[RMDB]
RNA sequence: GGGAACGACUCGAGUAGAGUCGAAAAAAAAGAUAUGGAGCAAGGGAGUCGAAACAACGCAAUGAUGCAGCUCGGAAACGAGCUGUUGAGCGUUGGAACCGACUUUGAUCUUGCUCCUAAGUCAAAACACCAUGUACAGGUUCGCCUGUACAUGGUGAAAAGAAACAACAACAACAAC
Reactivity to 2A3 in 0.01 (KOAc 150mM, MgCl2 10mM, bicine 150mM(pH8.5), 24C), signal-to-noise 1, nucleotides 027 to 126: a080a040a000a040g120a060u120a060u140g020g000a000g000c000a000a000g030g010g000a000g000u000c000g030a050a050a140c010a000a010c000g030c020a060a300u250g000a000u110g090c000a000g020c000u010c020g040g000a050a100a000c000g020a000g000c040u000g000u000u010g000a000g000c020g020u010u030g010g010a010a070c050c020g020a010c040u260u020u000g070a080u050c020u000u000g010c000u000c000c000u000a010a000g020u000c020a000a060a060a060
Reactivity to DMS in 0.01 (KOAc 150mM, MgCl2 10mM, bicine 150mM(pH8.5), 24C), signal-to-noise 2, nucleotides 027 to 126: a090a040a080a060g030a050u010a300u000g000g000a020g000c000a000a010g000g000g000a000g020u000c000g000a080a050a250c000a020a020c010g000c000a190a140u000g010a110u010g000c000a010g010c020u000c010g010g000a100a130a140c000g010a000g010c000u000g020u000u000g000a090g000c000g010u000u000g000g000a110a190c300c010g000a000c010u030u010u000g000a050u010c010u000u000g000c000u000c000c000u000a010a090g000u000c040a090a060a120a130
The record gives the reactivity of an RNA of 177 nucleotides to 2A3 and DMS. The 2A3 profile rests on 2,398 reads. Reactivities are rounded to 0.1 and cut off at 0 and 3. It was measured as part of the RMDB library TTRDES. The DMS profile rests on 2,033 reads. The RNA was probed in 150 mM KOAc, 10 mM MgCl2 and 150 mM bicine (pH 8.5) at 24 C.